[RMDB]
RNA sequence: GGGAACGACUCGAGUAGAGUCGAAAAGCUGGGACAGGUGUUGGAUGGUUUAGGGCAGCCUUUCGAUGGGGGGCAUCUCCCUGAACCGGCGGCUUGGUACCCAGUUUAUCAGGAUGCCCCAGCGCCGUACUUGAACUGUCUUCGGACAGUUCAAGUAAAAAGAAACAACAACAACAAC
Reactivity to DMS in 0.01 (KOAc 150mM, MgCl2 10mM, bicine 150mM(pH8.5), 24C), signal-to-noise 1, nucleotides 027 to 126: g000c010u000g000g000g000a100c010a030g000g010u000g030u000u040g010g010a140u020g020g000u020u000u000a000g000g010g050c300a080g000c010c000u000u000u000c000g000a160u020g030g010g000g010g000g000c000a060u000c130u010c000c000c000u000g000a010a000c020c010g020g000c050g000g010c010u000u010g010g000u000a090c030c000c010a040g000u000u000u000a030u010c130a070g000g000a150u010g010c040c000c010c060a070g000c050g010c020c050g030

Chemical mapping of a 177-nucleotide RNA with DMS. Reactivities are rounded to 0.1 and cut off at 0 and 3. DMS adducts were read by reverse transcription with MarathonRT. The DMS profile rests on 1,585 reads. It was measured as part of the RMDB library OK2TRN.